Description: Chemical mapping of a 207-nucleotide RNA with DMS and 2A3. For DMS, 6,645 sequencing reads were counted. Source: RMDB library OK3TST, as collected in RNAgym. Conditions: 150 mM KOAc, 10 mM MgCl2 and 150 mM bicine (pH 8.5), 24 C.
RNA sequence: GGGAACGACUCGAGUAGAGUCGAAAAGAUACGCAGGAAAGGAUACUUGCUGCUUCGACGUCGGGAAUCCACCUUGAGAAACCGUCCGUCGCGGACAGAGAUACCACGUCCUCUCCGCAACAGAGUCAGGCAGCUGCCUUGUUCGGUAUCCAUCCUGAAUACGCAGUACAUUCGUGUACUGCGUAUUAAAAGAAACAACAACAACAAC
Reactivity to DMS in 0.01 (KOAc 150mM, MgCl2 10mM, bicine 150mM(pH8.5), 24C), signal-to-noise 3, nucleotides 027 to 156: g000a090u000a040c080g000c030a100g000g000a060a160a110g020g010a060u000a050c080u000u000g030c000u000g020c010u000u000c070g010a040c010g030u000c050g010g020g010a110a150u000c040c080a240c100c080u080u020g030a130g000a110a090a240c010c020g030u000c040c060g020u000c020g010c000g000g030a070c070a060g010a070g010a100u000a100c050c210a120c130g020u000c120c010u000c010u000c000c010g000c020a060a050c030a100g010a100g000u000c020a110g000g020c020a020g010c020u000g010c050c130u010u000g010u000u000c020g000g000u000a040u010c010c040a300u000c030c010u000g010
Reactivity to 2A3 in 0.01 (KOAc 150mM, MgCl2 10mM, bicine 150mM(pH8.5), 24C), signal-to-noise 6, nucleotides 027 to 156: g020a010u070a030c040g020c110a070g000g060a050a050a020g020g010a030u080a210c090u130u190g000c000u000g000c000u020u060c100g010a010c010g040u060c020g040g010g030a080a140u020c010c020a090c130c140u210u230g120a120g010a200a060a000c010c000g030u040c060c060g020u020c050g010c010g000g000a000c040a040g040a010g010a060u160a240c050c100a070c210g050u020c000c010u000c000u000c000c000g000c000a010a040c020a040g100a010g040u020c010a010g000g000c000a010g010c020u040g040c000c020u070u060g090u110u120c030g010g000u000a000u000c000c010a050u020c000c010u020g000